[RMDB]
RNA sequence: GGGAACGACUCGAGUAGAGUCGAAAAUGAACAAACCUUUUGAUCCAGAUUACGGAGUAAGCUCAAAAAAGAAAGAGAAACCUCCAGUAUUACCGCAAUACAUGGAACUUGGCCUUUCGAUGGGACGAGAUGGUAGACAAUUCGUUGUCUACCAUCUAAAAGAAACAACAACAACAAC
Reactivity to DMS in 0.01 (KOAc 150mM, MgCl2 10mM, bicine 150mM(pH8.5), 24C), signal-to-noise 5, nucleotides 027 to 126: u030g000a100a080c120a090a100a120c090c020u000u000u050u010g000a060u020c040c030a100g000a120u010u030a050c060g010g000a020g010u000a050a030g020c010u020c020a020a050a080a100a100a140g020a070a130a150g000a040g000a030a110a080c090c010u000c000c000a090g000u000a020u000u020a060c150c140g010c120a060a040u010a020c050a040u030g000g010a070a040c080u000u000g020g030c070c000u000u020u010c050g010a110u030g000g000g000a100c050g010
Reactivity to 2A3 in 0.01 (KOAc 150mM, MgCl2 10mM, bicine 150mM(pH8.5), 24C), signal-to-noise 6, nucleotides 027 to 126: u150g030a070a030c050a080a070a080c010c000u090u080u020u110g090a080u020c020c010a040g010a170u090u060a020c020g010g000a010g010u030a100a010g010c000u010c020a070a100a060a020a040a040g170a070a120a010g000a020g000a010a040a020c000c000u000c000c010a000g000u010a020u030u050a050c020c030g050c080a020a030u040a070c080a080u080g060g010a030a010c020u020u080g110g000c000c020u050u100u060c040g080a080u130g050g030g000a020c040g000

The record gives the reactivity of an RNA of 177 nucleotides to DMS and 2A3. The reactions ran in a buffer of 150 mM KOAc, 10 mM MgCl2 and 150 mM bicine (pH 8.5), at 24 C. 2A3 adducts were read by reverse transcription with SuperScript II with manganese. For 2A3, 6,266 sequencing reads were counted.